[RMDB]
RNA sequence: GGGAACGACUCGAGUAGAGUCGAAAAGUGAAGCAAGAGCAGCGCAAAGGUGUUGACGCUGUUAUGCAUUUUGGUACGUUGGAUAAAGGUGAUCUUGUCAGGGGUUAUAAUAUCGCAUGUACGUGCGAGCUUAACAUGAGUUCGCUCAUGUUAAGCUAAAAGAAACAACAACAACAAC
Reactivity to 2A3 in 0.01 (KOAc 150mM, MgCl2 10mM, bicine 150mM(pH8.5), 24C), signal-to-noise 5, nucleotides 027 to 126: g050u060g070a080a010g010c020a040a050g030a010g100c010a010g040c010g000c050a030a060a060g250g070u160g070u170u050g060a080c010g000c010u000g010u020u000a010u030g020c020a020u050u090u090u100g040g010u060a040c060g030u040u090g040g000a050u040a060a100a000g040g020u040g020a050u040c030u040u080g040u020c040a020g010g010g020g000u030u040a050u010a140a080u060a030u050c020g010c030a010u040g040u150a020c110g010u020g020c020g030
Reactivity to DMS in 0.01 (KOAc 150mM, MgCl2 10mM, bicine 150mM(pH8.5), 24C), signal-to-noise 8, nucleotides 027 to 126: g020u020g010a110a120g010c040a060a100g010a080g010c010a020g030c020g020c040a050a100a160g010g020u010g020u000u000g010a120c030g020c010u000g010u000u000a060u010g010c020a160u000u000u010u000g010g020u020a030c100g020u000u000g000g000a050u000a040a070a090g010g010u000g010a060u000c030u010u000g010u000c100a080g010g000g000g010u000u000a050u010a080a120u010a080u010c010g020c010a020u000g000u000a040c170g020u000g010c030g010
Chemical mapping of a 177-nucleotide RNA with 2A3 and DMS. As a SHAPE reagent, 2A3 marks flexible, mostly unpaired nucleotides at the ribose 2'-OH. High DMS reactivity at an A or C suggests that its Watson-Crick edge is free.